Description
An RNA of 207 nucleotides, treated with 2A3 and DMS and read out base by base. For DMS the reverse transcriptase was MarathonRT.
RNA sequence: GGGAACGACUCGAGUAGAGUCGAAAAAUUGCCAGGCUAUCAUUAGUUACUACAACAAGAGUAACUCAAACAAACCGUCCAGAGCAAGAUGGAUAGCCUUUACUGAUUAUAUCACUAACACAGGGACAAACAUCAAGUUUGAGCAUAUUGAAGGCAAAUGAGACGAAGAAUUCGUUCUUCGUCUCAUAAAAGAAACAACAACAACAAC
Reactivity to 2A3 in 0.01 (KOAc 150mM, MgCl2 10mM, bicine 150mM(pH8.5), 24C), signal-to-noise 4, nucleotides 027 to 156: a000u070u040g020c010c010a030g010g000c000u010a010u020c010a060u070u050a000g000u000u000a010c010u060a040c040a260a040c050a300a040g030a010g130u000a000a010c010u040c060a100a120a080c040a040a090a060c040c030g010u050c040c030a040g010a040g130c070a080a040g020a070u050g030g010a000u020a040g000c000c000u030u020u010a060c010u000g010a000u100u090a060u020a030u210c050a050c100u070a100a010c100a030c040a150g050g010g060a040c030a030a030a000c040a070u160c150a210a080g010u020u020u050g050a020g030c020a020u040a050u120u170g100a070a060g030g000c020a040a040
Reactivity to DMS in 0.01 (KOAc 150mM, MgCl2 10mM, bicine 150mM(pH8.5), 24C), signal-to-noise 3, nucleotides 027 to 156: a110u000u000g000c000c040a120g010g040c040u000a040u000c060a150u000u000a080g000u000u000a020c030u000a160c060a100a210c250a150a160g000a090g000u000a010a030c000u000c030a100a080a140c050a040a070a100c070c040g020u000c030c050a160g000a150g030c060a090a110g010a100u010g010g020a040u000a030g010c000c020u010u000u000a070c060u000g020a110u000u010a110u020a300u000c030a050c070u000a050a090c060a090c050a090g010g020g030a100c010a070a080a070c080a130u000c090a040a110g010u000u000u020g000a060g030c030a080u000a120u000u000g010a090a070g030g010c000a030a120
For 2A3 the reverse transcriptase was SuperScript II with manganese. Source: RMDB library OK3TST, as collected in RNAgym.